[RMDB]
RNA sequence: GGGAACGACUCGAGUAGAGUCGAAAAGAUAUGGAAAUGAGGCAGGUCUAACCUUACUCUCGGAAACGAGAGCUAAGGUAAUCCUGCUCAUUUCCUAAGUCAAAACUGAGAACUUCGGUUCUCAGAAGAAGAACAUCACGUUCGCGUGAUGUUCUUCAAAAGAAACAACAACAACAAC
Reactivity to 2A3 in 0.01 (KOAc 150mM, MgCl2 10mM, bicine 150mM(pH8.5), 24C), signal-to-noise 2, nucleotides 027 to 126: g000a000u030a010u060g000g060a010a020a000u030g010a120g230g160c020a000g000g070u140c230u300a130a120c010c000u000u000a010c010u010c010u010c010g020g060a000a040a010c000g010a010g000a010g020c040u020a010a010g000g010u010a010a040u120c000c000u000g030c000u000c010a010u010u010u010c000c020u010a000a010g000u010c030a000a030a070a200c010u020g020a000g000a000a000c020u090u190c300g120g000u000u010c020u000c010a010g000a010a010
Reactivity to DMS in 0.01 (KOAc 150mM, MgCl2 10mM, bicine 150mM(pH8.5), 24C), signal-to-noise 1, nucleotides 027 to 126: g010a020u000a130u020g000g000a020a010a000u000g000a050g030g020c010a000g000g060u010c300u010a100a060c010c000u000u000a040c000u000c000u000c000g000g020a010a040a010c000g020a040g020a020g000c300u000a000a020g000g020u000a110a110u020c010c000u000g020c000u010c000a000u000u000u000c000c000u000a000a040g000u010c010a130a080a230a120c020u010g000a030g000a010a000c000u030u020c220g020g000u010u010c000u000c000a020g010a060a110